[RMDB]
RNA sequence: GGGAACGACUCGAGUAGAGUCGAAAAGCGACUGGGACAGCACUUGGGAAGAGGAGGUGCAGGAAGAGCAACCGGAGGCAGAGGAGGAGAGCCUUAGGUCGCGCAGAGGCCGCAGACUGCUCGUCUCCAUAGCCGGACAGUUCGCUGUCCGGCUAUGAAAAGAAACAACAACAACAAC
Reactivity to DMS in 0.01 (KOAc 150mM, MgCl2 10mM, bicine 150mM(pH8.5), 24C), signal-to-noise 1, nucleotides 027 to 126: g040c090g010a130c040u020g010g010g000a030c060a100g020c070a070c070u000u020g010g000g030a100a060g000a140g010g020a070g010g020u000g020c040a080g000g000a070a070g000a050g020c020a080a120c050c040g020g010a080g000g000c040a040g000a050g000g010a020g010g010a090g000a100g000c010c070u000u000a090g010g020u010c050g030c050g010c130a130g030a090g000g020c030c040g020c090a130g010a080c080u000g000c010u000c000g030u000c000u000c000
Reactivity to 2A3 in 0.01 (KOAc 150mM, MgCl2 10mM, bicine 150mM(pH8.5), 24C), signal-to-noise 1, nucleotides 027 to 126: g080c040g090a060c070u110g040g020g000a010c020a020g040c010a020c090u050u070g110g000g030a070a100g030a080g060g020a030g040g030u040g000c040a020g000g070a040a060g040a000g080c000a040a050c020c060g030g040a020g030g000c050a060g010a040g150g040a030g000g050a090g010a020g040c030c010u050u100a060g000g040u040c020g000c020g000c050a010g050a080g190g030c030c000g000c010a030g030a050c030u060g030c010u050c010g020u000c020u000c030

Chemical mapping of a 177-nucleotide RNA with DMS and 2A3.
Conditions: 150 mM KOAc, 10 mM MgCl2 and 150 mM bicine (pH 8.5), 24 C.
DMS adducts were read by reverse transcription with MarathonRT.
Reactivities are rounded to 0.1 and cut off at 0 and 3.
For 2A3 the reverse transcriptase was SuperScript II with manganese.
It was measured as part of the RMDB library OK2TRN.
For DMS, 969 sequencing reads were counted.